[RMDB]
RNA sequence: GGGAACGACUCGAGUAGAGUCGAAAAAAGACGCCCCGGCGCCCCUCACGGUGGCCCAGGAAGUGCAGGCCUUCGUGCGCGACAACGCCGAGGUCUGGGAGUACUUCGCGCCCGAAGUGCACGAGCACUUCGGGUAGCUCUUCGGAGCUACCCGAAGAAAAGAAACAACAACAACAAC
Reactivity to DMS in 0.01 (KOAc 150mM, MgCl2 10mM, bicine 150mM(pH8.5), 24C), signal-to-noise 6, nucleotides 027 to 126: a100a090g010a130c190g020c070c010c030c070g010g010c100g010c030c010c010c040u000c160a060c140g000g030u000g010g010c010c050c050a080g010g000a070a040g010u000g010c010a240g000g000c020c010u000u010c010g020u000g010c000g020c020g000a080c280a110a070c040g010c000c000g000a100g010g010u000c080u010g000g000g000a100g010u010a090c110u000u000c010g010c040g000c010c050c010g010a020a050g010u000g020c000a060c060g010a140g010c040a060
Reactivity to 2A3 in 0.01 (KOAc 150mM, MgCl2 10mM, bicine 150mM(pH8.5), 24C), signal-to-noise 2, nucleotides 027 to 126: a000a000g100a060c080g070c000c000c000c000g050g040c060g040c030c010c000c000u030c000a020c010g030g050u110g030g000c020c010c010a050g090g050a090a030g020u030g030c010a020g000g030c000c000u010u070c040g030u060g020c020g000c000g060a030c050a130a030c040g030c040c010g030a050g030g120u040c060u060g020g040g020a100g020u030a070c020u020u010c020g010c000g020c060c020c010g020a030a000g030u080g130c030a020c160g050a080g000c030a010
The record gives the reactivity of an RNA of 177 nucleotides to DMS and 2A3. 2A3 adducts were read by reverse transcription with SuperScript II with manganese. For 2A3, 3,699 sequencing reads were counted. The RNA was probed in 150 mM KOAc, 10 mM MgCl2 and 150 mM bicine (pH 8.5) at 24 C.